[RMDB]
RNA sequence: GGGAACGACUCGAGUAGAGUCGAAAAAACUACUUCUUCGGAAGUAGUUAUUGCGUGGGUCUAAUAAGCCCAAGGUGCCAGGUUCGACCCUUGCUGGGCCCAUCACCGACCGAUUCGUCGGUCGGAACUACAGCUAGGGUUUCGACCCUAGCUGUAGAAAAGAAACAACAACAACAAC
Reactivity to 2A3 in 0.01 (KOAc 150mM, MgCl2 10mM, bicine 150mM(pH8.5), 24C), signal-to-noise 1, nucleotides 027 to 126: a000a000c000u000a000c010u000u000c010u050u010c240g080g010a000a000g000u000a000g010u000u010a160u140u070g020c030g000u000g010g010g030u050c010u000a050a030u090a230a030g040c050c020c010a000a030g160g020u080g060c000c020a030g000g170u050u090c030g030a040c000c000c000u000u070g000c020u010g010g080g030c000c010c000a070u110c020a010c010c000g010a000c000c000g010a000u020u030c280g010u000c010g070g000u000c000g000g020a020a010
Reactivity to DMS in 0.01 (KOAc 150mM, MgCl2 10mM, bicine 150mM(pH8.5), 24C), signal-to-noise 1, nucleotides 027 to 126: a000a020c000u000a010c000u000u000c010u000u000c210g050g010a000a000g010u000a000g010u000u000a010u000u000g000c090g020u000g000g010g010u000c020u010a070a060u000a070a140g010c030c030c070a080a090g020g010u010g000c000c030a050g010g010u010u000c080g010a010c030c010c000u000u010g000c040u000g020g020g000c020c000c000a060u010c130a210c000c010g020a020c000c010g000a010u000u000c190g020u000c010g000g010u000c000g010g000a020a110